[RMDB]
RNA sequence: GGGAACGACUCGAGUAGAGUCGAAAAAGAAAAGCGGAGGAGGGUUAUGGAUUGCGCUAAGUCCGCCCGCGCGUGGUGUGGGCUGGAAUUGGUGAAUGGAGGAUAAUUAAUGCCGCGCGCCCAAAAAUCUUAGACAGAGAUUCGUCUCUGUCUAAGAAAAAGAAACAACAACAACAAC
Reactivity to DMS in 0.01 (KOAc 150mM, MgCl2 10mM, bicine 150mM(pH8.5), 24C), signal-to-noise 2, nucleotides 027 to 126: a100g000a110a080a100a130g020c080g010g010a090g000g010a090g020g020g020u000u000a050u000g030g010a120u000u000g020c010g000c020u000a020a030g000u010c000c000g010c000c010c010g020c000g010c060g020u010g030g020u000g030u010g010g010g020c020u010g010g000a030a050u000u000g010g000u000g020a090a080u010g010g010a110g020g010a060u010a040a080u010u010a050a100u010g020c000c020g000c060g000c120g000c010c020c000a030a080a070a080a110